[RMDB]
The data come from the RNA Mapping Database (RMDB), library OK1LIB. An RNA of 177 nucleotides, treated with 2A3 and DMS and read out base by base. DMS adducts were read by reverse transcription with MarathonRT. 2A3 adducts were read by reverse transcription with SuperScript II with manganese. Conditions: 150 mM KOAc, 10 mM MgCl2 and 150 mM bicine (pH 8.5), 24 C.
RNA sequence: GGGAACGACUCGAGUAGAGUCGAAAAACAUGAGCGGCAAGUCGACUCAGCAUUCCUUGUAGCUCGAGAGGGACAGUGGAGUCAGUGGUCGGCAAAGGUGGUCCCAGGCCGAGCGUUGCCUCGCCCGCGGUCAUCCUGGAUUCGUCCAGGAUGACCGAAAAGAAACAACAACAACAAC
Reactivity to 2A3 in 0.01 (KOAc 150mM, MgCl2 10mM, bicine 150mM(pH8.5), 24C), signal-to-noise 2, nucleotides 027 to 126: a000c080a160u210g010a010g050c030g000g010c030a100a030g050u070c030g030a060c020u000c090a030g100c040a090u030u060c000c010u010u080g060u020a070g060c000u000c090g010a030g050a040g040g030g000a030c010a000g060u140g090g020a000g000u030c040a040g040u100g280g010u040c020g000g000c030a040a090a000g060g010u040g000g070u080c040c010c060a030g050g020c020c000g000a020g040c030g080u080u050g040c000c010u020c040g000c000c020c000g080
Reactivity to DMS in 0.01 (KOAc 150mM, MgCl2 10mM, bicine 150mM(pH8.5), 24C), signal-to-noise 1, nucleotides 027 to 126: a030c070a120u050g000a000g050c020g000g020c100a060a110g000u000c030g010a090c010u010c030a160g000c090a140u010u010c050c050u030u000g000u070a170g000c170u000c050g040a260g000a160g000g010g000a050c040a050g000u030g030g000a070g070u000c030a090g000u040g000g020u000c080g030g000c000a060a100a110g020g040u000g000g000u000c010c010c010a240g000g050c070c030g000a110g000c130g030u010u050g000c060c010u010c010g020c000c000c000g000